[RMDB]
RNA sequence: GGGAACGACUCGAGUAGAGUCGAAAAAGAUAUGGAACAUCUCUAGCGUGAGCGAAGAACGUGAGAUAGCUGUAUGGUCGGAAACGACCAUACCGAAACACGGGAGCUUCGGGUGUUCCUAAGUCAACAUAUAAGCUUCCUUCGGGAAGCUUAUAUGAAAAGAAACAACAACAACAAC
Reactivity to 2A3 in 0.01 (KOAc 150mM, MgCl2 10mM, bicine 150mM(pH8.5), 24C), signal-to-noise 3, nucleotides 027 to 126: a000g020a010u040a010u060g000g000a010a000c010a010u020c140u100c200u300a130g170c020g150u300g060a020g030c020g090a300a020g000a030a000c000g010u020g020a110g030a150u190a110g130c020u010g000u020a010u000g000g010u010c010g010g000a010a000a000c020g000a000c010c000a000u000a000c010c010g000a000a020a020c000a000c000g000g000g020a010g010c010u000u020c020g020g000g000u010g000u000u000c000c000u000a000a000g000u000c020a040a060
Reactivity to DMS in 0.01 (KOAc 150mM, MgCl2 10mM, bicine 150mM(pH8.5), 24C), signal-to-noise 4, nucleotides 027 to 126: a110g000a010u010a040u010g000g000a040a000c000a010u000c000u010c280u010a140g020c100g040u020g000a040g050c040g000a070a170g000a150a230c010g000u000g000a070g010a140u000a180g030c050u010g000u000a000u000g000g000u000c010g000g000a010a020a030c000g010a010c010c000a000u000a000c000c040g000a200a120a240c010a000c010g000g000g000a030g010c010u000u000c020g000g000g000u000g000u000u000c000c000u010a010a060g000u000c010a130a250